[RMDB]
RNA sequence: GGGAACGACUCGAGUAGAGUCGAAAACGAUUGUGCCAGUGGUGGGCGUGGUGCCGGACUUUAGCCUCUCCGAGCUGCGUCUCAACUGGGAGGAGGUGGAGGAGGCGUUUAGUGUGCCGCUCACUUCAGUCAAAAUGGACUUCGGUCCAUUUUGACUAAAAGAAACAACAACAACAAC
Reactivity to 2A3 in 0.01 (KOAc 150mM, MgCl2 10mM, bicine 150mM(pH8.5), 24C), signal-to-noise 3, nucleotides 027 to 126: c040g130a150u020u110g050u050g120c050c050a030g000u020g030g090u110g010g020g010c030g070u110g000g000u110g100c090c030g000g040a050c000u070u020u080a080g040c000c010u010c000u000c020c000g030a040g020c000u050g100c020g170u060c010u010c050a050a150c110u150g020g010g060a050g000g010a050g030g010u180g040g040a030g020g010a030g000g050c020g020u000u160u010a160g030u120g030u060g090c000c020g000c030u010c000a000c000u010u020c020
Reactivity to DMS in 0.01 (KOAc 150mM, MgCl2 10mM, bicine 150mM(pH8.5), 24C), signal-to-noise 2, nucleotides 027 to 126: c090g000a160u010u040g050u000g000c070c120a000g000u000g000g000u070g000g000g050c040g070u010g000g010u010g020c140c000g030g000a040c260u000u010u000a200g010c010c040u030c070u020c000c000g000a300g010c000u000g030c070g010u000c030u020c020a190a180c060u010g000g000g000a130g000g000a230g010g000u030g000g000a130g000g000a140g000g000c020g000u000u040u000a110g000u000g040u030g020c000c010g060c000u000c010a040c000u000u040c020
This 177-nucleotide RNA was probed chemically with 2A3 and DMS. The DMS profile rests on 1,739 reads. The reactions ran in a buffer of 150 mM KOAc, 10 mM MgCl2 and 150 mM bicine (pH 8.5), at 24 C. 2A3 is a SHAPE reagent: it acylates the 2'-hydroxyl of flexible nucleotides of all four kinds. The data come from the RNA Mapping Database (RMDB), library OK1LIB. Values cover nucleotides 27 to 126.